[RMDB]
RNA sequence: GGGAACGACUCGAGUAGAGUCGAAAAUGGUGUUAAGUGGAAUAAGUGGAAAAAUAUACAUAUAUGUACAGGGGGCUACAUAUAUGUAUAUGCCCCCUCGCGUCAGUAUAAGUAGGUAUAAGGUGGACAUGCCGAUAUUAUUCGUAAUAUCGGCAUGAAAAGAAACAACAACAACAAC
Reactivity to 2A3 in 0.01 (KOAc 150mM, MgCl2 10mM, bicine 150mM(pH8.5), 24C), signal-to-noise 3, nucleotides 027 to 126: u100g020g000u050g010u120u080a140a080g040u060g090g050a090a110u110a110a060g020u160g030g060a070a050a000a050a000u050a000u010a000c010a000u040a000u010a010u020g000u010a020c090a100g000g000g000g040g000c020u020a010c010a000u040a000u020a000u000g010u000a000u010a000u010g000c010c000c000c010c000u020c000g000c010g050u060c030a030g010u060a020u010a140a040g070u060a020g080g030u060a080u030a190a050g040g010u040g010g010a020
Reactivity to DMS in 0.01 (KOAc 150mM, MgCl2 10mM, bicine 150mM(pH8.5), 24C), signal-to-noise 4, nucleotides 027 to 126: u030g000g000u010g020u010u030a060a130g020u010g000g010a070a090u010a040a070g000u020g000g000a050a060a090a080a030u010a020u000a000c000a020u010a030u010a020u000g000u000a040c120a140g020g000g010g010g020c130u000a000c020a010u000a030u000a030u000g010u000a010u010a010u000g000c070c020c000c010c020u000c060g010c030g010u010c040a040g000u000a050u020a030a100g010u010a020g010g000u010a040u010a070a040g010g010u020g000g000a210